[RMDB]
RNA sequence: GGGAACGACUCGAGUAGAGUCGAAAAGAGGGAUCAACUCCCGAGAGGGAGUCACUGGCAAGAAAGGGGGAACCUCGAGGAGAUGCCUCCCAAGAAGGCAGAGAGAAGACAAGAAUCGGAAGACUCUCCCCAAGACGCUGGAGUCAUCCUGGAAGGGGAUUGAAUGCUAGUUCGCUAGCAUUCAAUCAAAAGAAACAACAACAACAAC
Reactivity to DMS in 0.01 (KOAc 150mM, MgCl2 10mM, bicine 150mM(pH8.5), 24C), signal-to-noise 1, nucleotides 027 to 156: g000a170g020g010g010a120u000c050a150a120c000u000c000c000c000g000a270g020a300g010g020g040a040g020u000c050a070c080u000g010g020c110a070a170g010a070a130a080g020g000g020g030g000a000a090c050c070u000c070g010a140g000g000a080g010a100u000g010c120c000u010c000c030c070a140a160g040a110a030g070g050c050a110g030a080g020a100g000a080a030g000a050c040a170a040g000a100a110u000c040g000g000a050a140g010a010c040u000c030u000c000c060c010c050a120a100g020a050c100g020c010u040g000g000a080g000u000c030a150u000c000c000u000g000g000a160a070g000g010g050
Reactivity to 2A3 in 0.01 (KOAc 150mM, MgCl2 10mM, bicine 150mM(pH8.5), 24C), signal-to-noise 2, nucleotides 027 to 156: g040a010g020g010g040a060u130c040a040a070c010u030c040c030c010g020a020g020a030g030g020g000a030g000u020c030a010c040u020g040g010c040a070a030g060a200a100a080g010g010g000g010g000a010a030c020c010u000c060g010a060g000g050a110g010a000u070g040c000c010u030c000c010c000a040a040g080a010a020g000g000c070a000g000a000g010a000g000a120a010g010a030c050a060a030g030a100a040u100c070g010g030a030a010g010a030c000u010c010u050c030c010c010c020a020a030g070a010c040g000c090u080g000g000a020g020u010c020a030u020c010c020u030g020g000a080a030g030g000g000